The data come from the RNA Mapping Database (RMDB), library M2PK50. The record gives the reactivity of an RNA of 177 nucleotides to 2A3 and DMS. For DMS, 14,128 sequencing reads were counted. For 2A3 the reverse transcriptase was SuperScript II with manganese.
[RMDB]
RNA sequence: GGGAACGACUCGAGUAGAGUCGAAAAGUCGUGUCCUUCGGGACACGACAAACAUGGUAAACGCCGACACCAUGAAAGAUCGUAAAACGAUCAAGGCGUAAAAAAGUCUAACCUUCGGGUUAGACAACAGUUAUUAGUAGUUCGCUACUAAUAACUGAAAAGAAACAACAACAACAAC
Reactivity to 2A3 in 0.01 (KOAc 150mM, MgCl2 10mM, bicine 150mM(pH8.5), 24C), signal-to-noise 8, nucleotides 027 to 126: g000u000c000g000u000g000u010c010c010u020u050c200g080g000g000a000c000a000c000g000a000c000a000a000a000c000a000u010g000g010u070a170a150a030c010g020c020c010g120a130c060a030c090c000a000u020g030a200a060a010g000a000u000c010g010u070a030a050a070a300c000g000a000u000c010a000a020g000g000c010g000u060a030a040a000a020a010a040g000u000c000u000a000a000c000c000u020u080c260g100g000g000u000u000a000g000a000c000a000a000
Reactivity to DMS in 0.01 (KOAc 150mM, MgCl2 10mM, bicine 150mM(pH8.5), 24C), signal-to-noise 8, nucleotides 027 to 126: g020u000c000g030u000g000u000c000c010u000u010c180g040g010g010a010c000a000c000g020a000c000a040a050a160c040a030u000g000g000u000a100a100a040c010g010c000c000g010a210c180a050c010c000a010u000g000a120a100a110g010a010u000c010g010u010a080a060a090a300c020g000a010u000c010a060a130g000g010c010g010u000a000a040a070a090a080a070g010u000c000u010a010a010c000c000u000u010c190g020g010g000u000u000a000g000a000c000a030a080
DMS (dimethyl sulfate) methylates the pairing face of unpaired adenines and cytosines.